RNA sequence: GGGAACGACUCGAGUAGAGUCGAAAAUACGCUGUUCGCAGCGUAAAAAAGCGUACUACAUACAGAGCACGAAGAACAAGCAUGUAGUCCCAAAUAGGACGCAGAUAUGCUUGGGAGUGCCUGUAUGUAUCGCAAAAAACGAACCUUCGGGUUCGAAUGGAUUAUUGUUGUUCGCAACAAUAAUCCAAAAAGAAACAACAACAACAAC
Reactivity to DMS in 0.01 (KOAc 150mM, MgCl2 10mM, bicine 150mM(pH8.5), 24C), signal-to-noise 2, nucleotides 027 to 156: u000a040c000g010c010u000g030u000u000c300g050c040a050g020c010g040u030a000a010a070a090a060a100g010c000g000u000a030c110u000a010c000a030u000a000c000a000g000a230g050c000a000c000g010a160a140g020a080a140c020a030a040g020c000a000u010g010u000a200g010u000c000c010c020a070a120a200u000a070g020g020a020c000g020c090a120g020a100u020a020u000g020c000u000u010g000g000g020a180g010u000g010c040c010u000g010u000a000u000g010u000a000u000c020g000c030a000a040a040a070a060a160c020g010a030a000c000c000u000u010c300g040g030g020u000u000c000g000a040a090
Reactivity to 2A3 in 0.01 (KOAc 150mM, MgCl2 10mM, bicine 150mM(pH8.5), 24C), signal-to-noise 3, nucleotides 027 to 156: u070a000c000g000c010u020g010u100u090c240g020c060a020g000c000g000u010a070a020a000a000a000a000g050c040g080u120a080c050u010a000c020a000u000a000c000a040g070a050g110c000a000c020g160a300a050g010a050a020c010a010a000g000c020a000u020g010u040a080g000u080c030c040c010a270a240a020u260a060g000g000a000c000g000c030a000g030a220u180a060u070g000c000u000u000g000g020g000a040g000u000g000c000c000u000g000u000a000u000g000u000a000u010c010g010c000a050a100a030a000a000a060c020g000a000a010c000c000u060u070c300g040g000g000u020u000c000g000a030a060